[RMDB]
RNA sequence: GGGAACGACUCGAGUAGAGUCGAAAACGGUGAUGACGGAACGCAGGCUCGCGAGGGACGCGACCAGCGCGCGCUUGGCGUCGUGAUACAUGCUGCAGUACUGACUCACCGCGUCCCCCAUGGCCUCGUACGGAGAAUGGUUCGCCAUUCUCCGUACAAAAGAAACAACAACAACAAC
Reactivity to 2A3 in 0.01 (KOAc 150mM, MgCl2 10mM, bicine 150mM(pH8.5), 24C), signal-to-noise 6, nucleotides 027 to 126: c020g010g020u010g020a040u030g040a020c040g020g020a130a000c040g010c030a010g050g000c040u040c050g040c040g010a090g020g060g040a030c030g020c020g050a070c010c040a050g020c030g000c000g000c010g020c110u090u110g160g060c040g050u090c010g000u030g010a030u070a160c070a060u180g060c020u040g020c040a020g040u050a060c020u020g030a030c010u010c020a030c000c000g010c000g020u080c010c000c000c010c010a110u150g080g000c000c030u050c060
Reactivity to DMS in 0.01 (KOAc 150mM, MgCl2 10mM, bicine 150mM(pH8.5), 24C), signal-to-noise 3, nucleotides 027 to 126: c040g010g010u000g000a030u020g000a230c130g000g000a120a150c110g000c080a000g010g000c060u000c040g050c070g000a100g000g020g030a020c020g000c060g000a110c110c060a020g000c020g000c030g000c040g000c080u010u040g000g020c010g040u000c020g040u010g000a140u050a150c120a010u020g000c070u000g000c010a060g000u000a170c080u000g000a300c250u030c040a010c110c000g000c080g020u000c000c010c000c080c040a040u020g000g020c000c040u040c050
Structure probing data (2A3 and DMS) for a 177-nucleotide construct.
Reactivities are given for positions 27 through 126.